[RMDB]
RNA sequence: GGGAACGACUCGAGUAGAGUCGAAAAAGAAGGCUGUUAAUAUAGCUAAAAACGCCUAUGAGAAGGAUAAGGCAGUGGCCCGUAAGUUAGAACGUAUGGCUGAUCAGGCUAUGACUUCUAUGUAUAACUACCGAGAUGUUCGCAUCUCGGAAAAGAAACAACAACAACAAC
Reactivity to 2A3 in 0.01 (KOAc 150mM, MgCl2 10mM, bicine 150mM(pH8.5), 24C), signal-to-noise 6, nucleotides 027 to 129: a000g120a030a010g020g010c050u040g040u050u040a150a000u160a060u080a090g030c060u110a050a000a010a010a000c060g020c010c000u020a030u080g110a120g020a080a030g050g030a050u080a070a030g020g000c020a050g010u040g030g000c000c000c010g060u040a030a020g040u020u020a010g010a030a010c070g000u020a000u040g000g000c000u010g040a300u170c070a050g020g000c010u010a010u060g060a050c000u020u000c000u010a060u050g120u000a110u030a120a050c030u050a060
Reactivity to DMS in 0.01 (KOAc 150mM, MgCl2 10mM, bicine 150mM(pH8.5), 24C), signal-to-noise 2, nucleotides 027 to 129: a020g040a070a080g020g000c030u010g000u030u030a090a160u030a090u030a070g030c020u030a000a040a040a040a040c160g020c000c000u000a040u040g000a160g000a100a060g030g010a070u040a040a040g010g000c060a070g050u020g000g000c040c060c050g030u000a030a040g030u000u010a040g000a050a040c100g020u000a090u030g000g000c000u000g020a120u010c280a130g010g030c020u000a050u000g010a020c000u010u020c020u060a070u040g000u050a060u050a110a070c080u000a040

Notes:
The record gives the reactivity of an RNA of 170 nucleotides to 2A3 and DMS. DMS adducts were read by reverse transcription with MarathonRT. It was measured as part of the RMDB library 15KLIB. The RNA was probed in 150 mM KOAc, 10 mM MgCl2 and 150 mM bicine (pH 8.5) at 24 C. For 2A3, 12,365 sequencing reads were counted. 2A3 adducts were read by reverse transcription with SuperScript II with manganese.